RNA sequence: GGGAACGACUCGAGUAGAGUCGAAAAUCGACUGCCAAGACUAAGUACUCUCCGAGACCGAUAGUGAACAAGUAGUGUGAACGAACGCUGAAAAGCACCCCACAAAGGGGGGUGAAAUAGGGCUUGAUUUGUAACUUAGUUUCGACUAAGUUACAAAAAAAGAAACAACAACAACAAC
Reactivity to 2A3 in 0.01 (KOAc 150mM, MgCl2 10mM, bicine 150mM(pH8.5), 24C), signal-to-noise 4, nucleotides 027 to 126: u050c010g010a010c030u060g020c030c010a050a030g040a080c000u050a040a060g050u030a060c000u000c010u000c030c030g030a040g040a100c020c020g030a030u050a070g080u070g070a090a030c020a100a000g030u070a040g010u070g030u070g110a050a030c050g010a050a020c050g000c040u020g030a020a030a000a050g020c000a010c000c000c020c010a090c080a070a170a040g110g020g000g010g000g000u030g030a020a030a010u150a030g040g010g020c010u010u030g030a040
Reactivity to DMS in 0.01 (KOAc 150mM, MgCl2 10mM, bicine 150mM(pH8.5), 24C), signal-to-noise 4, nucleotides 027 to 126: u020c040g020a090c080u020g020c020c020a050a080g010a070c200u020a220a300g030u030a050c030u020c010u010c000c020g020a100g000a100c060c050g020a080u020a040g010u010g000a110a060c090a070a070g000u000a060g010u010g010u010g010a060a060c090g010a050a090c080g010c010u020g000a060a050a100a150g000c010a010c010c000c000c000a050c150a080a100a110g010g020g000g000g000g020u000g000a040a020a110u020a110g000g000g010c020u000u010g000a250
Source information:
Source: RMDB libraries RFM100 and RFMREP, as collected in RNAgym. Structure probing data (2A3 and DMS) for a 177-nucleotide construct. For 2A3 the reverse transcriptase was SuperScript II with manganese.